[RMDB]
RNA sequence: GGGAACGACUCGAGUAGAGUCGAAAACAAAUAUUGAAUGAGUGGGCAGAAGAUGUAGCAGAAGGGAUUGCCCAAAUACAAGUCAUGUAUGAUCCAGGGCUUAUAUUAAUUGGUGGCGGUAUAUCUGCGUUACGUCGAAUUUCGAUUCGACGUAACGAAAAGAAACAACAACAACAAC
Reactivity to 2A3 in 0.01 (KOAc 150mM, MgCl2 10mM, bicine 150mM(pH8.5), 24C), signal-to-noise 3, nucleotides 027 to 126: c000a000a160a040u200a060u150u170g070a030a120u110g000a020g090u010g020g010g000c100a020g000a110a030g070a120u070g020u230a050g090c050a000g040a050a040g060g000g050a040u010u080g030c000c000c000a030a010a000u030a000c000a030a010g050u040c000a010u080g080u110a090u170g070a030u060c040c030a030g000g000g010c000u020u010a030u000a060u170u170a150a130u070u040g050g000u030g000g080c080g020g050u040a070u000a010u150c020u020g020
Reactivity to DMS in 0.01 (KOAc 150mM, MgCl2 10mM, bicine 150mM(pH8.5), 24C), signal-to-noise 3, nucleotides 027 to 126: c060a100a070a130u010a050u030u020g020a090a090u030g010a100g030u000g000g000g000c020a070g010a130a030g030a050u040g020u010a070g000c070a040g000a080a060g000g000g000a070u010u010g000c050c010c040a040a030a020u020a030c080a010a060g010u030c060a000u020g030u030a070u010g000a120u050c170c030a010g040g000g000c050u010u010a030u020a010u000u010a090a100u000u000g000g010u010g020g010c040g000g000u000a070u010a080u000c030u000g000
Source: RMDB library OK1LIB, as collected in RNAgym. The record gives the reactivity of an RNA of 177 nucleotides to 2A3 and DMS. The RNA was probed in 150 mM KOAc, 10 mM MgCl2 and 150 mM bicine (pH 8.5) at 24 C. The 2A3 profile rests on 1,614 reads. 2A3 adducts were read by reverse transcription with SuperScript II with manganese.